Conditions: 150 mM KOAc, 10 mM MgCl2 and 150 mM bicine (pH 8.5), 24 C. An RNA of 177 nucleotides, treated with 2A3 and read out base by base. For 2A3, 413 sequencing reads were counted.
[RMDB]
RNA sequence: GGGAACGACUCGAGUAGAGUCGAAAAAAUAGUCACAGUCAUGAGCUAAUUGAUUGCCCAGGUACGCGCAAGGCGGUCAUUUUCAUGCCGUCCAGUAUAGUAUUAUUCGGAUCAACCGUUGCGUCCGGCGCACCGUACAAUUCGUUGUACGGUGCGCAAAAGAAACAACAACAACAAC
Reactivity to 2A3 in 0.01 (KOAc 150mM, MgCl2 10mM, bicine 150mM(pH8.5), 24C), signal-to-noise 2, nucleotides 027 to 126: a000a000u300a040g020u040c100a020c010a180g060u070c000a090u230g100a090g010c010u010a090a170u090u190g000a060u040u250g010c000c000c000a000g040g000u090a030c030g000c000g000c000a040a040g000g000c000g060g030u130c120a080u150u220u080u020c040a040u090g070c010c000g000u000c000c000a050g150u150a080u200a230g020u000a070u250u020a120u290u080c000g110g000a060u000c000a000a080c120c050g120u160u100g100c020g000u110c000c050g000